[RMDB]
RNA sequence: GGGAACGACUCGAGUAGAGUCGAAAAAUGGAAACAGCCGCUUAUCGUGAAGCUGCAGCAUGUCAUCUUGCUAAAGCCUUACAAACAUACAGCGAGACUGGUAGUGAUCUUCUUUACCAACCACCCACAGCUGAUAUAAGUUCGCUUAUAUCAGCUGAAAAGAAACAACAACAACAAC
Reactivity to DMS in 0.01 (KOAc 150mM, MgCl2 10mM, bicine 150mM(pH8.5), 24C), signal-to-noise 4, nucleotides 027 to 126: a090u000g020g000a150a100a160c080a070g020c050c030g010c030u000u000a050u010c190g010u000g010a030a050g000c000u000g010c300a010g000c010a010u010g010u000c180a090u000c050u000u010g040c020u000a060a300a020g000c000c020u000u010a030c090a070a130a100c170a060u000a040c180a040g010c000g010a080g020a100c060u000g000g000u010a050g010u010g010a070u010c170u000u000c080u000u000u000a060c080c030a030a100c080c030a110c030c000c040a230
Reactivity to 2A3 in 0.01 (KOAc 150mM, MgCl2 10mM, bicine 150mM(pH8.5), 24C), signal-to-noise 3, nucleotides 027 to 126: a010u050g020g010a070a120a020c020a010g010c020c010g000c040u030u030a060u130c080g010u020g030a010a000g000c000u010g000c020a000g000c000a000u020g090u160c050a100u060c100u020u020g010c000u010a020a000a020g000c000c000u020u040a010c010a010a200a020c010a030u100a010c050a030g000c010g050a050g080a140c020u040g050g010u040a040g060u030g100a090u020c040u090u000c000u020u180u020a050c010c010a030a030c000c010a050c000c000c010a030

Conditions: 150 mM KOAc, 10 mM MgCl2 and 150 mM bicine (pH 8.5), 24 C.
The record gives the reactivity of an RNA of 177 nucleotides to DMS and 2A3.
For DMS, 2,564 sequencing reads were counted.
For 2A3, 4,287 sequencing reads were counted.
2A3 adducts were read by reverse transcription with SuperScript II with manganese.
Reactivities are given for positions 27 through 126.